Conditions: 150 mM KOAc, 10 mM MgCl2 and 150 mM bicine (pH 8.5), 24 C. An RNA of 207 nucleotides, treated with 2A3 and DMS and read out base by base. Reactivities are given for positions 27 through 156.
RNA sequence: GGGAACGACUCGAGUAGAGUCGAAAAGCGGGGCUUGAAACGCGGGUAGCGCGCACGCCCGGCGAAGAAGUUCGCAUACGUGGUGUGCUGGUGCCGAAGUGUCUGCUGCAACGGCACGCUCGACACCUAGAACAUACCGUAUUCGUACGGUAUGUAAGGUUAGAAUUGACUUCGGUCAAUUCUAACCAAAAGAAACAACAACAACAAC
Reactivity to 2A3 in 0.01 (KOAc 150mM, MgCl2 10mM, bicine 150mM(pH8.5), 24C), signal-to-noise 3, nucleotides 027 to 156: g020c030g010g010g000g040c040u050u090g060a090a090a040c090g000c030g070g030g060u100a030g040c040g000c020g000c030a010c010g000c000c030c000g010g000c020g000a030a020g050a030a030g120u050u020c010g010c020a040u040a210c060g070u150g010g010u010g030u000g010c030u020g010g000u000g010c010c010g020a030a020g030u040g000u030c070u090g070c060u080g010c050a050a000c010g000g000c000a000c020g030c030u040c020g010a010c000a020c010c010u030a050g030a060a010c000a000u000a000c000c000g000u010a010u010u060c120g050u010a010c010g000g000u000a000u000g010u010a050a070
Reactivity to DMS in 0.01 (KOAc 150mM, MgCl2 10mM, bicine 150mM(pH8.5), 24C), signal-to-noise 1, nucleotides 027 to 156: g000c050g000g030g050g020c050u030u000g000a120a090a080c000g000c050g000g030g020u010a120g070c010g000c090g020c020a120c060g050c020c000c010g000g000c000g000a030a150g020a140a140g000u000u000c020g020c020a080u010a210c010g020u000g080g020u000g050u020g000c010u000g010g000u000g050c000c000g000a090a100g000u000g010u020c020u010g000c100u000g060c130a150a190c150g010g000c010a020c010g000c070u020c000g020a100c040a030c020c010u000a140g000a090a020c020a010u000a000c000c000g000u000a050u000u000c250g020u000a010c030g000g020u000a000u000g000u000a040a090